Chemical mapping of a 177-nucleotide RNA with DMS and 2A3. It was measured as part of the RMDB libraries RFM100 and RFMREP. The RNA was probed in 150 mM KOAc, 10 mM MgCl2 and 150 mM bicine (pH 8.5) at 24 C.
[RMDB]
RNA sequence: GGGAACGACUCGAGUAGAGUCGAAAAGUCGUUUUUACGACCGCGGGGCAGCUCGCCAUAGCAACAGUUAUGUGGCCAGUGGGGAUACAACCCACCAACACAACGGGGCUUACUCCCGCACUGACGCCAUGUCAUAAAAUUUCGAUUUUAUGACAUGAAAAGAAACAACAACAACAAC
Reactivity to DMS in 0.01 (KOAc 150mM, MgCl2 10mM, bicine 150mM(pH8.5), 24C), signal-to-noise 9, nucleotides 027 to 126: g010u000c010g010u000u020u010u010u030a020c010g010a020c030c110g010c020g000g000g010g010c300a050g010c020u000c030g010c060c110a090u010a070g010c130a140a160c130a080g000u010u010a070u010g010u000g010g010c170c240a100g010u000g000g010g000g000a160u030a100c300a100a240c010c000c000a030c020c040a090a130c050a030c060a060a090c060g010g000g000g010c030u000u010a090c250u020c010c000c000g010c030a090c100u010g000a100c170g010c140
Reactivity to 2A3 in 0.01 (KOAc 150mM, MgCl2 10mM, bicine 150mM(pH8.5), 24C), signal-to-noise 9, nucleotides 027 to 126: g000u000c010g000u010u020u030u150u300a030c020g010a010c000c010g000c010g000g000g010g000c020a010g010c010u020c020g070c040c020a080u110a090g100c050a020a140c030a050g030u100u100a150u160g020u020g030g020c080c020a020g000u010g000g020g000g020a060u110a280c070a050a100c020c000c000a010c010c000a090a020c030a000c010a050a050c030g010g000g010g000c000u010u040a040c030u030c020c000c000g010c010a030c050u060g050a030c050g020c040